The record gives the reactivity of an RNA of 177 nucleotides to DMS and 2A3.
Source: RMDB library M2PK90, as collected in RNAgym.
The reactions ran in a buffer of 150 mM KOAc, 10 mM MgCl2 and 150 mM bicine (pH 8.5), at 24 C.
For DMS, 3,653 sequencing reads were counted.
The 2A3 profile rests on 1,306 reads.
RNA sequence: GGGAACGACUCGAGUAGAGUCGAAAAAGAGUACGGCCGCAAGGUUUCCGGUUGUGGAUGGCAGCGUCUGUGUCGCCCCGUCGUCUAGUGCUGGUUCUAGGGCUGGGGCGUCAGCAUCCAGGUAAAACAGACUAUACUCGUUCGCGAGUAUAGUCUGAAAAGAAACAACAACAACAAC
Reactivity to DMS in 0.01 (KOAc 150mM, MgCl2 10mM, bicine 150mM(pH8.5), 24C), signal-to-noise 2, nucleotides 027 to 126: a060g010a130g000u010a080c060g000g010c030c020g010c110a070a080g010g000u010u000u000c050c040g010g010u010u000g010u000g020g010a050u010g000g000c040a050g000c060g010u010c060u000g000u000g010u010c010g000c010c010c010c010g000u000c020g010u010c020u000a020g010u000g020c110u000g000g000u010u010c020u010a020g010g010g010c040u010g050g010g000g030c010g010u000c030a050g000c060a050u010c020c020a110g010g010u010a040a060a090a180
Reactivity to 2A3 in 0.01 (KOAc 150mM, MgCl2 10mM, bicine 150mM(pH8.5), 24C), signal-to-noise 1, nucleotides 027 to 126: a010g090a000g060u130a010c060g050g060c000c010g100c070a030a040g090g020u000u050u060c010c030g050g070u140u050g100u090g030g030a080u020g060g000c030a030g030c060g090u070c060u060g110u000g000u040c010g040c030c000c010c010g040u060c020g010u040c000u000a010g000u030g110c100u180g110g000u140u040c010u030a020g020g040g000c050u120g070g030g000g000c000g000u020c000a010g020c040a000u000c010c000a030g090g030u090a020a020a010a080